This 177-nucleotide RNA was probed chemically with 2A3 and DMS. It was measured as part of the RMDB library OK2TST. For DMS, 12,850 sequencing reads were counted. Reactivities are given for positions 27 through 126.
RNA sequence: GGGAACGACUCGAGUAGAGUCGAAAAUCUUGUGCUCUGAGGACUUUGCACUUUCCUAGUAGCUCACAGAACUCAGCUAAACUUUUGAAUUGUGGGAAACUUGGUUUUCCUGCGCUCAGUCAAAGCCUAAUAUGAGCAGAUUCGUCUGCUCAUAUUAAAAAGAAACAACAACAACAAC
Reactivity to 2A3 in 0.01 (KOAc 150mM, MgCl2 10mM, bicine 150mM(pH8.5), 24C), signal-to-noise 3, nucleotides 027 to 126: u020c010u040u120g030u040g030c010u020c020u080g070a050g020g030a090c040u130u140u160g020c030a020c000u030u060u040c010c010u000a010g020u050a010g020c000u020c030a050c020a050g070a070a040c030u020c060a020g000c050u100a090a110a130c040u180u160u030u080g050a090a050u080u100g000u020g020g000g000a000a010a020c050u110u160g110g040u050u030u040u020c010c000u000g010c030g000c010u030c010a010g050u040c040a050a050a100g020c020c000
Reactivity to DMS in 0.01 (KOAc 150mM, MgCl2 10mM, bicine 150mM(pH8.5), 24C), signal-to-noise 8, nucleotides 027 to 126: u000c060u000u000g020u000g000c080u000c040u000g010a070g000g000a120c090u000u000u000g020c050a060c040u010u000u010c050c050u000a070g020u000a060g020c030u010c070a100c110a050g000a090a150c060u000c050a030g020c090u010a070a090a120c100u000u000u000u010g000a060a090u000u010g050u000g000g000g000a010a010a020c020u010u010g020g000u010u000u000u000c020c020u000g010c040g000c070u000c040a040g000u010c060a060a090a110g010c050c090